[RMDB]
RNA sequence: GGGAACGACUCGAGUAGAGUCGAAAAAGUAGGCGUCUACGGACGCCUACAGGGUGUGAAGUGGUCACUUGAGUUGCAGUGGGGUAGUGGAACACGCUGUAUCCCAUGUGACCGCUCUACACAGUAAUGCUAUCAUAACUUUCGAGUUAUGAUAGCAAAAAGAAACAACAACAACAAC
Reactivity to DMS in 0.01 (KOAc 150mM, MgCl2 10mM, bicine 150mM(pH8.5), 24C), signal-to-noise 4, nucleotides 027 to 126: a120g020u010a000g010g010c000g020u000c000u000a120c210g020g010a010c000g020c000c000u000a000c010a030g020g000g010u000g000u000g000a040a010g030u000g000g000u000c010a000c000u000u000g000a080g010u000u000g010c000a010g010u000g010g010g020g030u000a140g010u030g030g010a140a090c030a060c010g000c000u000g020u000a000u000c010c020c010a010u010g000u010g000a000c000c000g000c000u000c010u000a010c000a010c000a140g010u040a100a140
Reactivity to 2A3 in 0.01 (KOAc 150mM, MgCl2 10mM, bicine 150mM(pH8.5), 24C), signal-to-noise 8, nucleotides 027 to 126: a000g010u000a000g000g000c000g010u000c000u010a030c230g070g000a000c000g000c000c000u000a000c000a000g000g040g010u010g000u000g020a030a000g000u000g020g000u000c000a000c000u020u010g020a020g040u020u030g010c020a010g000u020g020g170g050g020u120a100g120u180g240g140a110a020c030a010c040g000c000u000g010u020a020u030c000c000c000a000u030g000u000g000a000c000c000g000c000u000c000u010a000c010a000c000a010g060u120a090a160
Structure probing data (DMS and 2A3) for a 177-nucleotide construct. Source: RMDB libraries RFM100 and RFMREP, as collected in RNAgym. Conditions: 150 mM KOAc, 10 mM MgCl2 and 150 mM bicine (pH 8.5), 24 C. Values are in units of 0.01, from 0 to 300, in steps of 10.